[RMDB]
Structure probing data (2A3 and DMS) for a 207-nucleotide construct. For DMS, 1,625 sequencing reads were counted. For 2A3 the reverse transcriptase was SuperScript II with manganese.
RNA sequence: GGGAACGACUCGAGUAGAGUCGAAAAAAUGUAUUAACAAGGUUCACUUGGUUUCAAGAGGUAAUACUGUACGGGAAAAUAUGUGAAACCUUCCUGAGAUGCUGUACAGAAUUUAAUAGAUCAGGGGUUAAACUAGUCAAGGUAAGACACUGUGACACUCCUUUAAACCAUUCGUGGUUUAAAGGAGAAAAGAAACAACAACAACAAC
Reactivity to 2A3 in 0.01 (KOAc 150mM, MgCl2 10mM, bicine 150mM(pH8.5), 24C), signal-to-noise 2, nucleotides 027 to 156: a010a000u140g020u040a140u010u250a090a020c030a000a070g080g000u110u100c020a010c010u110u110g030g050u120u150u110c040a050a020g030a020g110g000u090a060a030u020a140c000u010g020u020a010c000g000g000g030a030a020a040a160u140a040u090g100u030g100a090a040a000c050c000u120u120c010c000u030g010a050g000a030u090g060c010u000g010u030a060c000a060g010a030a110u100u140u120a170a080u060a040g040a020u030c020a000g000g090g010g000u100u030a050a050a040c050u020a020g050u040c010a010a030g060g000u050a000a000g040a050c020a000c020u070g010u020g120a010c020a000
Reactivity to DMS in 0.01 (KOAc 150mM, MgCl2 10mM, bicine 150mM(pH8.5), 24C), signal-to-noise 1, nucleotides 027 to 156: a090a050u000g000u020a070u040u000a020a160c060a060a080g000g000u010u010c020a070c030u020u000g000g000u030u000u010c020a100a160g010a110g030g010u000a040a120u000a090c040u000g080u000a110c050g000g020g000a050a070a090a070u000a070u000g020u000g020a150a060a050c060c010u000u000c060c010u000g000a140g010a070u030g020c030u020g010u010a160c000a010g020a060a080u000u000u020a000a130u000a110g010a120u000c050a040g000g020g050g020u000u000a030a060a100c060u000a020g020u000c080a020a090g020g020u010a110a110g000a210c090a030c050u010g020u000g020a070c060a110